[RMDB]
RNA sequence: GGGAACGACUCGAGUAGAGUCGAAAAGAUAUGGACUCAGAAGAGGCAACAGCGUGUGUAUCGGAAACGAUACCACGACAUGCCUCCUGAGUCCUAAGUCAAACGCACACUCUUCGGAGUGUGCGAAGCAAUCUGUAGACUUCGGUCUACAGAUUGCAAAAGAAACAACAACAACAAC
Reactivity to DMS in 0.01 (KOAc 150mM, MgCl2 10mM, bicine 150mM(pH8.5), 24C), signal-to-noise 1, nucleotides 027 to 126: g010a000u000a010u010g000g000a000c000u000c000a000g030a220a160g020a020g040g050c030a140a050c140a040g020c030g000u000g000u010g000u030a000u000c000g000g010a010a030a000c000g010a030u000a000c000c000a000c060g020a020c040a300u060g010c000c000u000c000c000u000g000a020g030u000c010c000u000a000a000g000u000c010a110a130a300c000g000c000a010c000a020c010u000c000u010u040c170g060g000a000g010u000g000u030g010c010g020a030a060
Reactivity to 2A3 in 0.01 (KOAc 150mM, MgCl2 10mM, bicine 150mM(pH8.5), 24C), signal-to-noise 2, nucleotides 027 to 126: g000a000u010a000u060g000g000a000c000u000c010a100g040a300a110g040a300g090g000c100a300a070c110a300g000c000g000u020g020u030g000u000a010u000c000g000g000a010a000a010c010g010a000u010a000c000c000a000c030g020a000c000a070u300g000c000c000u000c010c000u010g000a000g000u000c000c000u000a000a000g000u010c000a100a000a080c000g000c000a000c010a010c000u020c020u090u080c300g190g000a000g000u000g000u000g000c000g000a000a000